[RMDB]
RNA sequence: GGGAACGACUCGAGUAGAGUCGAAAAGGCUGGCUGUAUCUGGCAGUGGUCAUUGACCUGUGGUCACGUGCCGUUAUUGGCUGGUCAAUGUCGCCACGCAUGACGGCGCAACUGGCCUGCGAUGCCAGCUGCGACUGACUUUCGAGUCAGUCGCAGCAAAAGAAACAACAACAACAAC
Reactivity to 2A3 in 0.01 (KOAc 150mM, MgCl2 10mM, bicine 150mM(pH8.5), 24C), signal-to-noise 2, nucleotides 027 to 126: g060g000c020u020g000g000c010u010g060u150a120u100c070u110g030g000c020a030g000u020g030g010u040c030a060u070u100g150a110c000c040u070g030u090g100g030u010c020a010c090g120u100g020c010c000g000u000u050a080u110u170g060g040c000u000g000g010u010c010a020a070u110g090u170c080g000c010c000a030c060g050c060a080u110g070a040c000g030g040c030g000c020a020a080c030u050g000g030c000c050u030g010c050g060a030u130g010c020c000a020
Reactivity to DMS in 0.01 (KOAc 150mM, MgCl2 10mM, bicine 150mM(pH8.5), 24C), signal-to-noise 3, nucleotides 027 to 126: g000g010c010u000g010g010c010u000g010u000a040u000c050u000g060g020c010a120g010u010g020g000u000c010a030u000u010g010a100c140c130u000g030u000g020g010u030c040a040c120g020u010g030c030c000g000u000u010a050u000u010g030g030c020u000g010g010u000c050a040a070u000g010u010c110g020c010c000a080c180g000c160a120u010g010a080c080g020g000c060g000c000a090a050c060u010g000g010c000c010u000g000c110g000a150u010g010c010c020a030